[RMDB]
Source information:
An RNA of 207 nucleotides, treated with 2A3 and read out base by base. Values cover nucleotides 27 to 156. For 2A3, 820 sequencing reads were counted.

RNA sequence: GGGAACGACUCGAGUAGAGUCGAAAAGAUGGGUCCGAUGGAUUAAUGCGUCGCCAGCCAUUGGAUCCUGAUUGAUAGAUUGAUGGCGACGGUCGGAUCACUCGGUAAUUCGGUGCUCAACGAGUGAUCCGUGAUGAUAGUUAAGAUGAGCACCUAAAAUAUAGCGACGGUUCGCCGUCGCUAUAUUAAAAGAAACAACAACAACAAC
Reactivity to 2A3 in 0.01 (KOAc 150mM, MgCl2 10mM, bicine 150mM(pH8.5), 24C), signal-to-noise 2, nucleotides 027 to 156: g070a030u080g000g000g020u000c000c000g010a020u000g000g010a000u200u040a150a120u300g150c010g000u000c010g000c000c010a010g020c010c010a000u000u000g000g000a000u000c000c000u010g000a010u020u290g050a050u060a180g070a050u000u270g120a040u060g000g010c000g000a000c000g000g050u020c000g000g000a000u010c000a000c010u010c000g070g050u180a150a080u170u170c020g000g000u000g000c000u010c000a000a060c010g000a000g010u000g000a000u010c000c000g000u000g010a020u000g000a020u050a090g190u200u230a050a090g040a150u060g020a010g000c000a000c000c000u000a000a010
The data come from the RNA Mapping Database (RMDB), library OK3TST. Conditions: 150 mM KOAc, 10 mM MgCl2 and 150 mM bicine (pH 8.5), 24 C.